RNA sequence: GGGAACGACUCGAGUAGAGUCGAAAAACCCUUCCUGCUUCGGCAGGAAGGGUAAUGCGGGUGGCUUCAGCCCUCAGAAAACUUGGGGCGCCACCCCUACUGGAUGGUCAGGUUCGCCUGACCAUCCGCUCCAUUUUAUAUUCGUAUAAAAUGGAGCAAAAGAAACAACAACAACAAC
Reactivity to 2A3 in 0.01 (KOAc 150mM, MgCl2 10mM, bicine 150mM(pH8.5), 24C), signal-to-noise 3, nucleotides 027 to 126: a000c000c000c000u000u000c010c010u020g040c020u040u040c170g120g010c010a040g000g000a010a010g000g010g010u010a010a010u130g010c150g000g010g000u000g020g020c030u260u200c100a020g010c000c000c010u070c030a050g140a060a300a060a080c070u100u110g000g000g000g010c020g020c010c000a000c000c000c000c000u030a110c040u030g020g000a000u000g000g020u010c000a010g010g010u020u050c170g040c040c000u000g000a010c000c010a000u000c000c000
Reactivity to DMS in 0.01 (KOAc 150mM, MgCl2 10mM, bicine 150mM(pH8.5), 24C), signal-to-noise 2, nucleotides 027 to 126: a040c000c000c000u010u000c000c010u000g010c000u000u010c210g040g010c010a010g000g010a010a000g020g010g010u000a010a020u000g020c250g010g010g010u000g010g010c200u010u010c300a230g010c020c000c000u010c280a010g000a160a080a100a150c070u000u000g000g000g000g000c000g010c000c010a030c010c000c000c020u000a020c100u010g000g010a010u000g010g000u010c000a020g000g020u000u010c210g010c000c010u000g000a010c000c000a000u000c000c000